This 177-nucleotide RNA was probed chemically with 2A3 and DMS. Conditions: 150 mM KOAc, 10 mM MgCl2 and 150 mM bicine (pH 8.5), 24 C.
RNA sequence: GGGAACGACUCGAGUAGAGUCGAAAAGCGUUUUUGGUCACGCAUUACGGCUGAAAAACAACGUGCGAUCGAAAUCCACCGGAUCGUUUAUCUCGCAGAUCCGCGAACUGGAAUCAGUGCGGGAGCACUCCCCGAUUAGUUUCGACUAAUCGGGGAGAAAAGAAACAACAACAACAAC
Reactivity to 2A3 in 0.01 (KOAc 150mM, MgCl2 10mM, bicine 150mM(pH8.5), 24C), signal-to-noise 4, nucleotides 027 to 126: g050c030g010u010u000u010u060u080g040g020u030c040a020c130g040c050a070u070u230a050c090g040g020c030u080g020a040a000a000a030a020c040a050a010c050g050u060g030c030g030a040u030c020g020a070a060a060u020c040c000a020c020c030g030g000a010u010c010g020u000u040u110a130u030c040u010c010g010c020a020g000a070u030c020c000g010c050g050a080a040c060u090g010g090a120a090u130c020a040g120u020g070c010g010g010g000a000g020c020a010
Reactivity to DMS in 0.01 (KOAc 150mM, MgCl2 10mM, bicine 150mM(pH8.5), 24C), signal-to-noise 5, nucleotides 027 to 126: g020c050g010u000u000u000u010u010g020g020u000c020a090c180g020c070a100u000u010a090c200g020g020c020u000g000a050a060a060a050a050c070a070a070c080g010u000g010c040g020a130u000c020g000a030a090a070u010c030c010a120c090c030g010g000a020u000c020g000u000u000u000a120u010c020u010c010g020c040a130g000a030u000c000c010g000c120g020a080a100c160u000g000g000a030a060u010c080a050g010u010g010c010g000g020g000a060g010c200a170
Background: The DMS profile rests on 4,859 reads. The data come from the RNA Mapping Database (RMDB), library OK2TST.